RNA sequence: GGGAACGACUCGAGUAGAGUCGAAAAAGUUCGCGCUUCCGUGAAACGCGAAAAUCGGACGGUGGCUGCAAGUCGCAUCGCAAAACCGCGGCAAGUGGAGUUAGCGAGAGGAGCCUGGGUUUUGGCUAGAACACACGGUACUUCGGUACCGUGUGAAGAACGAGGAAUAGUUCGCUAUUCCUCGUUCAAAAGAAACAACAACAACAAC
Reactivity to 2A3 in 0.01 (KOAc 150mM, MgCl2 10mM, bicine 150mM(pH8.5), 24C), signal-to-noise 2, nucleotides 027 to 156: a000g090u080u030c020g020c030g000c090u080u000c100c080g140u080g080a050a050a050c020g030c020g000a040a000a020a080u120c040g040g010a020c020g010g050u040g020g000c040u030g020c080a100a010g040u030c020g000c050a070u030c020g020c060a060a090a010a010c030c040g010c010g100g030c140a110a090g040u050g060g040a080g040u040u090a010g040c020g030a020g020a050g020g030a030g030c000c000u060g010g090g000u010u020u030u080g030g000c010u050a050g090a260a010c000a000c000a000c010g000g010u000a000c020u000u130c100g020g000u000a000c000c000g000u000g000u000g000a010a000
Reactivity to DMS in 0.01 (KOAc 150mM, MgCl2 10mM, bicine 150mM(pH8.5), 24C), signal-to-noise 1, nucleotides 027 to 156: a120g030u000u000c000g010c000g030c000u010u000c030c160g000u010g000a060a020a010c010g020c010g000a040a040a120a150u000c050g000g020a120c050g000g030u000g030g000c030u000g000c040a000a150g000u010c020g040c060a140u000c030g000c040a070a110a090a140c040c050g020c000g000g020c070a030a130g010u010g000g000a120g000u000u000a130g000c010g000a100g010a160g000g000a150g000c020c010u020g010g000g000u000u000u000u030g020g010c050u000a120g000a120a210c010a030c000a000c000g000g000u000a000c000u000u000c280g010g000u000a000c000c060g000u040g000u000g000a060a090